[RMDB]
RNA sequence: GGGAACGACUCGAGUAGAGUCGAAAAGGUUACCACGACGGUCAGCACAGCGAGCACGGCGACCACCGCAACCCAACGGCCCACCGAACCGAUGCUGCGGUCACGGUCGGUGUCGUCUAAGUCCUGGGUAAAGUGCAGAAUUCGUUCUGCACUUUACAAAAGAAACAACAACAACAAC
Reactivity to 2A3 in 0.01 (KOAc 150mM, MgCl2 10mM, bicine 150mM(pH8.5), 24C), signal-to-noise 9, nucleotides 027 to 126: g060g020u060u070a080c010c020a070c050g060a010c040g030g030u060c020a020g020c020a040c010a050g050c040g080a030g040c030a020c060g040g000c020g030a020c020c010a010c020c010g020c030a040a090c000c000c000a000a020c030g020g000c010c010c020a020c000c020g010a050a020c000c000g040a080u120g060c110u170g040c050g060g010u070c060a050c120g020g000u030c070g000g020u070g010u030c010g000u000c000u020a040a060g050u030c000c030u080g020g030
Reactivity to DMS in 0.01 (KOAc 150mM, MgCl2 10mM, bicine 150mM(pH8.5), 24C), signal-to-noise 5, nucleotides 027 to 126: g000g010u010u010a060c030c020a080c100g020a110c110g020g020u000c020a060g040c040a090c100a070g000c080g000a080g010c050a070c040g000g000c020g000a090c040c020a070c020c030g000c080a080a080c020c040c030a120a040c070g000g000c000c020c020a040c010c020g010a250a050c000c010g000a110u040g030c130u000g010c040g010g000u000c070a070c060g000g010u010c070g010g010u020g020u000c060g000u000c060u010a080a090g010u010c010c020u010g000g010

Chemical mapping of a 177-nucleotide RNA with 2A3 and DMS. The 2A3 profile rests on 15,233 reads. Source: RMDB library OK1LIB, as collected in RNAgym. DMS adducts were read by reverse transcription with MarathonRT.